[RMDB]
RNA sequence: GGGAACGACUCGAGUAGAGUCGAAAAUUGAGGUGGGCAGCGCAAUCGGGAUGGACAUCAGCAGAGAGUCUGCACAGAUGUUUUCCUACCUUGCUGAAGCUGAGGAAGAUGUCCCUACUAAGGACGCGUUCAACUCACGUUUCGACGUGAGUUGAACAAAAGAAACAACAACAACAAC
Reactivity to DMS in 0.01 (KOAc 150mM, MgCl2 10mM, bicine 150mM(pH8.5), 24C), signal-to-noise 3, nucleotides 027 to 126: u010u000g010a120g000g030u000g000g010g000c020a020g040c120g010c060a050a040u000c140g000g000g000a070u000g010g030a010c020a030u010c000a120g000c020a020g010a210g010a290g040u000c020u000g020c020a090c280a110g030a030u010g000u000u000u000u020c010c020u000a200c130c140u000u000g030c020u000g000a040a120g000c020u020g000a090g000g010a080a110g010a060u000g010u000c000c000c010u000a110c150u020a090a110g000g010a030c080g030c180
Reactivity to 2A3 in 0.01 (KOAc 150mM, MgCl2 10mM, bicine 150mM(pH8.5), 24C), signal-to-noise 1, nucleotides 027 to 126: u060u050g060a020g060g070u080g000g050g000c000a010g010c030g020c030a060a030u090c000g010g010g020a040u090g040g050a020c000a010u000c000a010g000c020a000g070a020g010a030g230u000c020u000g000c030a030c020a100g020a010u000g000u000u050u100u000c000c000u000a060c000c010u040u030g000c040u090g050a090a020g000c040u010g010a030g040g030a080a050g080a120u120g040u030c020c000c000u060a110c080u050a100a010g010g020a000c030g000c020
An RNA of 177 nucleotides, treated with DMS and 2A3 and read out base by base. 2A3 is a SHAPE reagent: it acylates the 2'-hydroxyl of flexible nucleotides of all four kinds. The reactions ran in a buffer of 150 mM KOAc, 10 mM MgCl2 and 150 mM bicine (pH 8.5), at 24 C. For DMS, 2,075 sequencing reads were counted.